[RMDB]
RNA sequence: GGGAACGACUCGAGUAGAGUCGAAAAGAUAUGGAGGGUGUCAAGACAUGAACGCGAUCGGAAACGAUCGUCGUUCAACAGCUUGCACCCUCCUAAGUCAAAAGCGAAAGUCUUCGGACUUUCGCAACGUAUGAAAUACGUUCGCGUAUUUCAUACGAAAAGAAACAACAACAACAAC
Reactivity to 2A3 in 0.01 (KOAc 150mM, MgCl2 10mM, bicine 150mM(pH8.5), 24C), signal-to-noise 5, nucleotides 027 to 126: g000a000u010a000u070g020g000a010g010g000g030u030g230u300c070a000a000g020a070c170a300u180g000a000a000c010g000c000g010a000u000c000g000g010a010a010a010c000g000a000u000c000g020u040c010g000u000u000c000a000a010c020a010g020c000u000u010g000c000a000c000c000c000u000c000c000u000a000a000g000u000c000a000a010a060a040g010c000g010a010a000a000g010u000c010u070u130c300g120g010a010c000u010u000u000c010g000c000a000a000
Reactivity to DMS in 0.01 (KOAc 150mM, MgCl2 10mM, bicine 150mM(pH8.5), 24C), signal-to-noise 8, nucleotides 027 to 126: g000a010u000a100u010g000g000a020g000g010g010u000g000u030c020a010a010g010a050c140a140u020g000a020a010c000g010c020g000a010u000c000g010g000a030a030a050c000g000a010u000c000g010u010c030g030u000u000c000a040a060c200a160g010c000u000u000g000c000a010c000c000c000u000c000c000u000a000a050g000u000c010a120a090a140a150g000c000g000a020a000a010g010u000c000u000u020c250g020g000a020c000u000u000u000c000g010c000a010a010
This 177-nucleotide RNA was probed chemically with 2A3 and DMS. For DMS, 23,594 sequencing reads were counted. The reactions ran in a buffer of 150 mM KOAc, 10 mM MgCl2 and 150 mM bicine (pH 8.5), at 24 C. The 2A3 profile rests on 30,018 reads.